[RMDB]
RNA sequence: GGGAACGACUCGAGUAGAGUCGAAAAGCAUGGUGAAUUUGUCAUACAUAACACCACACAAUUGAGAAUUCAUUUCAUUCAAGGAAAGGAUGCAAUUUUGAUCCGUAUGCCAAAAGACUUUCCUCCAGUUACUUAGCUUAUUCGUAAGCUAAGUAACAAAAGAAACAACAACAACAAC
Reactivity to DMS in 0.01 (KOAc 150mM, MgCl2 10mM, bicine 150mM(pH8.5), 24C), signal-to-noise 7, nucleotides 027 to 126: g020c090a100u030g000g010u000g000a100a080u010u000u000g000u010c030a060u010a140c030a100u020a100a110c110a070c090c100a130c100a060c070a040a030u000u010g000a090g030a150a040u010u010c020a050u010u000u010c010a070u060u050c300a090a140g000g010a040a060a050g010g010a010u010g000c050a020a030u000u000u000u010g000a080u030c070c070g000u000a020u000g000c020c010a020a030a060a080g020a090c070u000u000u000c010c010u010c070c060a150
Reactivity to 2A3 in 0.01 (KOAc 150mM, MgCl2 10mM, bicine 150mM(pH8.5), 24C), signal-to-noise 9, nucleotides 027 to 126: g070c080a090u170g010g020u060g050a190a110u030u020u050g060u050c020a020u040a070c010a030u180a170a070c050a050c100c010a030c010a000c010a050a080u040u060g050a070g120a110a080u050u040c040a090u070u030u050c050a090u130u110c090a080a040g150g010a060a010a010g020g010a010u020g040c030a030a050u020u040u030u100g070a080u050c050c050g010u020a020u020g010c020c010a020a040a010a030g060a040c020u040u050u010c010c000u040c020c000a010